An RNA of 177 nucleotides, treated with DMS and 2A3 and read out base by base. DMS adducts were read by reverse transcription with MarathonRT. It was measured as part of the RMDB library OK1LIB. The RNA was probed in 150 mM KOAc, 10 mM MgCl2 and 150 mM bicine (pH 8.5) at 24 C.

RNA sequence: GGGAACGACUCGAGUAGAGUCGAAAAUUCAGACUGGCCAAGUUGACUCCUGGACCUGGUCCUGCUUACAAAUUGAUCGAAGGGACUCUCAUGAUGAAGGAGGUACAAUAUGUGAAAGCCCGGAGAGGACGACUGUGUUUUUCGAAACACAGUCGUCAAAAGAAACAACAACAACAAC
Reactivity to DMS in 0.01 (KOAc 150mM, MgCl2 10mM, bicine 150mM(pH8.5), 24C), signal-to-noise 2, nucleotides 027 to 126: u000u020c010a160g010a060c020u000g000g000c020c050a070a050g000u000u000g000a130c000u000c010c000u000g000g010a000c020c030u000g000g030u000c000c060u030g010c120u030u020a030c210a010a140a060u000u030g010a070u000c120g010a300a090g010g040g020a030c040u010c020u000c100a060u010g000a120u000g000a110a060g000g000a060g000g000u090a140c020a060a140u040a000u000g010u000g000a050a120a090g020c010c000c030g010g040a300g040a100g000
Reactivity to 2A3 in 0.01 (KOAc 150mM, MgCl2 10mM, bicine 150mM(pH8.5), 24C), signal-to-noise 2, nucleotides 027 to 126: u080u030c020a040g040a120c100u120g070g000c030c030a050a060g090u020u030g080a070c020u000c000c020u040g000g040a090c000c020u000g030g010u050c000c010u030g050c000u090u030a100c010a040a070a100u230u160g050a140u220c030g030a020a090g000g000g070a130c000u000c000u000c010a060u120g220a100u060g080a060a060g020g000a000g040g060u060a030c040a060a180u060a000u200g060u070g010a040a000a020g060c000c030c000g070g000a040g000a070g050